An RNA of 177 nucleotides, treated with 2A3 and DMS and read out base by base. The RNA was probed in 150 mM KOAc, 10 mM MgCl2 and 150 mM bicine (pH 8.5) at 24 C. Values cover nucleotides 27 to 126. DMS adducts were read by reverse transcription with MarathonRT.

[RMDB]
RNA sequence: GGGAACGACUCGAGUAGAGUCGAAAAUGAUUUUAUUCAGGAAGGCAUAGGUGGCAACUCCUAAGUCGAGCACAAAGUUGCCUGGAACUCAACUAUUUUGGGUUUCAUGCGUCAUCAUGAAUGGACCCACCCUUGUUUACUUCGGUAAACAAGGGUGAAAAGAAACAACAACAACAAC
Reactivity to 2A3 in 0.01 (KOAc 150mM, MgCl2 10mM, bicine 150mM(pH8.5), 24C), signal-to-noise 1, nucleotides 027 to 126: u070g030a010u030u060u000u170a070u040u040c000a010g100g050a070a000g060g000c020a050u060a140g070g050u020g020g010c020a020a050c020u000c030c020u060a110a050g050u000c120g120a040g000c050a030c020a130a010a040g040u070u010g010c040c050u000g000g020a020a010c000u000c000a020a050c060u190a300u090u200u030u010g040g030g000u010u010u000c000a010u020g020c000g060u020c020a060u020c000a040u090g080a070a010u060g000g030a020c010c000
Reactivity to DMS in 0.01 (KOAc 150mM, MgCl2 10mM, bicine 150mM(pH8.5), 24C), signal-to-noise 2, nucleotides 027 to 126: u020g000a150u010u000u000u000a020u000u000c000a060g010g000a080a070g010g010c030a050u000a090g020g020u010g000g010c040a020a040c010u010c040c040u010a080a100g010u000c100g030a150g010c140a050c090a090a100a060g020u000u000g000c000c020u000g010g000a010a010c010u010c010a010a060c300u030a120u010u000u000u020g020g000g010u000u000u000c000a030u000g020c050g010u000c020a030u000c030a090u010g000a040a050u000g000g000a100c090c030